The record gives the reactivity of an RNA of 177 nucleotides to DMS and 2A3. It was measured as part of the RMDB library OK2TST. For DMS the reverse transcriptase was MarathonRT. The 2A3 profile rests on 1,259 reads. Conditions: 150 mM KOAc, 10 mM MgCl2 and 150 mM bicine (pH 8.5), 24 C. 2A3 adducts were read by reverse transcription with SuperScript II with manganese. Values cover nucleotides 27 to 126.

RNA sequence: GGGAACGACUCGAGUAGAGUCGAAAACAUAGCAUCACGAUAUUCAUCCAAUUGUUCAUCAUAGCCAUCUUUUAUUACGUUUCCUUCAGUAAUUUGAAGAGGCGACUCUUCAUUAAUCGCCAUACAAAAAUAGUCCUAGGUUCGCCUAGGACUAUUUAAAAGAAACAACAACAACAAC
Reactivity to DMS in 0.01 (KOAc 150mM, MgCl2 10mM, bicine 150mM(pH8.5), 24C), signal-to-noise 5, nucleotides 027 to 126: c080a130u000a070g020c040a040u000c030a070c070g010a100u000a070u000u000c060a070u000c040c060a060a110u010u000g020u000u000c060a050u000c040a050u010a090g010c020c030a060u010c020u000u010u000u000a080u010u010a090c080g000u000u000u000c010c010u010u010c120a100g000u010a060a090u000u000u000g010a020a020g010a040g000g000c250g000a100c040u000c020u000u000c020a020u000u000a050a060u010c080g020c050c060a080u000a070c150a040a050
Reactivity to 2A3 in 0.01 (KOAc 150mM, MgCl2 10mM, bicine 150mM(pH8.5), 24C), signal-to-noise 1, nucleotides 027 to 126: c010a030u060a010g010c010a000u010c000a000c000g060a040u020a060u180u090c050a050u000c020c000a010a090u020u060g030u020u040c040a060u010c000a030u060a020g000c000c000a060u010c060u020u140u020u100a170u090u120a000c030g000u010u050u020c000c000u000u020c030a000g010u070a140a150u040u050u170g000a000a010g010a000g000g020c000g000a000c000u010c000u020u050c000a000u000u060a010a040u060c020g050c060c040a050u180a270c060a090a070